Structure probing data (DMS and 2A3) for a 177-nucleotide construct. The reactions ran in a buffer of 150 mM KOAc, 10 mM MgCl2 and 150 mM bicine (pH 8.5), at 24 C. For 2A3 the reverse transcriptase was SuperScript II with manganese. For DMS the reverse transcriptase was MarathonRT.

RNA sequence: GGGAACGACUCGAGUAGAGUCGAAAACGUCGCAUCCCAGCGACUCAUCAGUGGGCUUUGCCCAGACUUUUGAGAGUAGUGAUGACCUCUCAGCCCCUCCACCUUGGGGUGCCCUAUUCGGAGCACUGUAGUCAAAAUUGUUCGCAAUUUUGACUACAAAAGAAACAACAACAACAAC
Reactivity to DMS in 0.01 (KOAc 150mM, MgCl2 10mM, bicine 150mM(pH8.5), 24C), signal-to-noise 1, nucleotides 027 to 126: c250g010u000c010g000c000a110u000c000c000c010a230g000c000g000a030c030u000c030a010u000c020a190g000u000g040g000g020c010u030u000u020g000c000c010c000a050g030a100c270u000u000u010u040g010a010g000a030g010u010a070g000u000g010a040u000g020a240c230c000u000c040u000c010a140g000c030c020c000c010u000c000c010a100c090c080u000u010g000g010g000g000u000g010c030c020c010u000a080u000u030c230g000g000a160g010c040a030c050u000
Reactivity to 2A3 in 0.01 (KOAc 150mM, MgCl2 10mM, bicine 150mM(pH8.5), 24C), signal-to-noise 2, nucleotides 027 to 126: c040g020u000c010g000c020a110u060c010c000c010a010g000c000g010a010c040u000c040a050u000c020a040g250u040g000g000g030c060u250u190u300g030c060c000c000a000g040a080c070u230u200u150u130g020a000g000a000g000u030a000g000u020g040a020u030g000a010c010c000u000c010u020c000a070g010c010c030c000c000u000c020c010a090c000c020u070u100g110g010g030g020u010g000c010c000c010u120a230u150u170c080g020g020a070g070c000a020c040u040